Notes:
This 177-nucleotide RNA was probed chemically with DMS and 2A3. 2A3 is a SHAPE reagent: it acylates the 2'-hydroxyl of flexible nucleotides of all four kinds. The DMS profile rests on 1,920 reads. 2A3 adducts were read by reverse transcription with SuperScript II with manganese. The reactions ran in a buffer of 150 mM KOAc, 10 mM MgCl2 and 150 mM bicine (pH 8.5), at 24 C. In probing experiments dimethyl sulfate is read out at A N1 and C N3, which are open when not base-paired. DMS adducts were read by reverse transcription with MarathonRT.
RNA sequence: GGGAACGACUCGAGUAGAGUCGAAAAGUAGCCGGAUUGAUAGCGCCGCCCCUCGCGGUGGCCGCAAAUCUAGCGGGAGCCCUACCCGGAAUCGUUGGCGGCGCGCCCAAUCCCUAUACCUAUCCGGCGAAAAGGCGACAUUCGUGUCGCCUUUUCGAAAAGAAACAACAACAACAAC
Reactivity to DMS in 0.01 (KOAc 150mM, MgCl2 10mM, bicine 150mM(pH8.5), 24C), signal-to-noise 2, nucleotides 027 to 126: g030u000a090g000c080c180g000g010a040u000u000g000a110u060a200g010c010g000c000c000g020c020c000c170c170u010c050g000c220g050g020u010g020g000c010c000g000c000a020a140a110u040c150u040a140g050c000g000g000g040a090g010c150c240c040u020a080c000c000c000g000g000a160a020u010c200g000u050u030g000g060c000g010g000c000g040c000g000c090c070c040a040a120u000c000c000c000u020a130u010a080c180c010u000a000u010c020c000g000g000
Reactivity to 2A3 in 0.01 (KOAc 150mM, MgCl2 10mM, bicine 150mM(pH8.5), 24C), signal-to-noise 2, nucleotides 027 to 126: g160u140a000g030c050c010g010g000a000u010u060g090a080u080a180g000c000g010c010c000g000c030c000c000c000u080c010g080c110g000g030u010g000g020c000c000g010c010a230a200a050u130c060u160a020g000c020g010g040g000a120g040c020c000c020u060a060c000c020c000g040g000a120a140u170c080g040u060u110g000g000c000g000g000c000g000c020g000c040c000c000a010a110u080c030c010c010u120a130u040a050c010c000u020a030u010c020c000g000g090